[RMDB]
RNA sequence: GGGAACGACUCGAGUAGAGUCGAAAAGAUAUGGACCGAUGUAUACAGCUAUAAUCUCGGAAACGAGGUAGCUGUACGCGGUCCUAAGUCAAAGGAGACCAGUUCAGUUCGCUGAACUGGUCUCCAAGUAUUAGGUCUAGUUCGCUAGACCUAAUACAAAAGAAACAACAACAACAAC
Reactivity to 2A3 in 0.01 (KOAc 150mM, MgCl2 10mM, bicine 150mM(pH8.5), 24C), signal-to-noise 2, nucleotides 027 to 126: g030a030u080a050u150g000g000a000c010c010g030a080u060g060u080a240u000a070c000a000g020c010u010a030u050a300a300u250c000u010c010g070g000a110a080a050c010g010a010g000g020u020a010g000c010u000g010u000a000c020g000c000g000g000u000c000c000u010a030a010g010u010c010a080a070a000g000g010a010g000a000c000c000a000g000u010u010c000a020g010u030u120c210g000c190u000g000a000a000c020u000g000g000u000c000u000c000c000a000a000
Reactivity to DMS in 0.01 (KOAc 150mM, MgCl2 10mM, bicine 150mM(pH8.5), 24C), signal-to-noise 6, nucleotides 027 to 126: g010a040u000a300u010g010g010a010c000c010g000a050u010g020u010a160u000a010c000a000g010c000u000a040u010a300a110u010c000u000c000g000g000a080a100a190c000g000a010g020g010u000a010g010c000u000g010u000a000c020g010c010g000g010u000c000c000u000a010a060g010u010c040a050a120a140g000g000a010g000a010c000c000a010g010u000u000c000a010g000u000u010c230g020c020u010g000a000a000c000u000g000g010u000c000u000c010c000a000a030
Chemical mapping of a 177-nucleotide RNA with 2A3 and DMS. Conditions: 150 mM KOAc, 10 mM MgCl2 and 150 mM bicine (pH 8.5), 24 C. The DMS profile rests on 10,666 reads. DMS adducts were read by reverse transcription with MarathonRT. The data come from the RNA Mapping Database (RMDB), library TTRDEL.